[RMDB]
RNA sequence: GGGAACGACUCGAGUAGAGUCGAAAAAUAGACCACAACAUGUUUGAGGAGAUGGAGACCGAGAUCAUCGAGUACCUCGGGCCGUGGGUCCAGGCAGAGUACAGGAGGAUAAAGGGUUAGAAGCGUCUAAUGGACUAUCCUUCGGGAUAGUCCAUUAAAAAGAAACAACAACAACAAC
Reactivity to DMS in 0.01 (KOAc 150mM, MgCl2 10mM, bicine 150mM(pH8.5), 24C), signal-to-noise 1, nucleotides 027 to 126: a130u000a120g010a190c040c020a060c050a040a100c070a090u020g010u010u020u010g000a080g000g000a090g000a070u000g020g000a100g000a070c030c030g010a060g050a060u010c090a080u000c070g020a140g010u010a070c020c010u000c100g020g000g040c050c060g010u000g010g030g020u000c040c010a060g020g000c020a050g020a080g040u010a060c120a050g030g010a020g010g010a060u000a060a050a110g010g010g000u000u000a050g000a040a160g010c120g010u000c110